Chemical mapping of a 177-nucleotide RNA with DMS and 2A3. The 2A3 profile rests on 3,240 reads. The reactions ran in a buffer of 150 mM KOAc, 10 mM MgCl2 and 150 mM bicine (pH 8.5), at 24 C. It was measured as part of the RMDB library TTRDES.
[RMDB]
RNA sequence: GGGAACGACUCGAGUAGAGUCGAAAAAAAAAAGAUAUGGACUGUGAUUCUUGAUGACCCUGUUCACAGUAUAUCGGAAACGAUAUAUCACAGACAGGCAAGAGAGCACAGUCCUAAGUCAAAAAAACAUAGAUGGUAAGUUCGCUUACCAUCUAUGAAAAGAAACAACAACAACAAC
Reactivity to DMS in 0.01 (KOAc 150mM, MgCl2 10mM, bicine 150mM(pH8.5), 24C), signal-to-noise 3, nucleotides 027 to 126: a000a030a060a090a050a100g000a010u000a300u010g000g000a010c010u040g010u000g020a100u020u000c000u010u000g000a060u010g000a110c300c000c000u000g020u000u000c070a120c270a250g000u000a010u000a000u000c000g000g000a130a040a150c000g010a010u020a000u000a040u000c060a100c300a250g000a020c000a020g000g000c020a040a070g000a010g000a010g010c000a000c000a000g010u000c000c000u010a000a060g000u020c040a000a000a050a090a070a030a200
Reactivity to 2A3 in 0.01 (KOAc 150mM, MgCl2 10mM, bicine 150mM(pH8.5), 24C), signal-to-noise 2, nucleotides 027 to 126: a000a020a000a030a030a060g040a000u070a010u060g000g010a010c010u030g030u050g080a300u230u000c000u080u210g170a300u120g060a140c000c010c000u040g020u090u080c070a020c040a090g060u020a000u010a000u010c000g010g000a080a030a030c000g000a000u010a010u000a000u060c030a050c060a100g080a010c010a000g020g010c040a120a130g020a000g010a010g030c000a000c000a000g010u000c010c000u010a010a020g000u030c010a000a040a000a020a000a170a210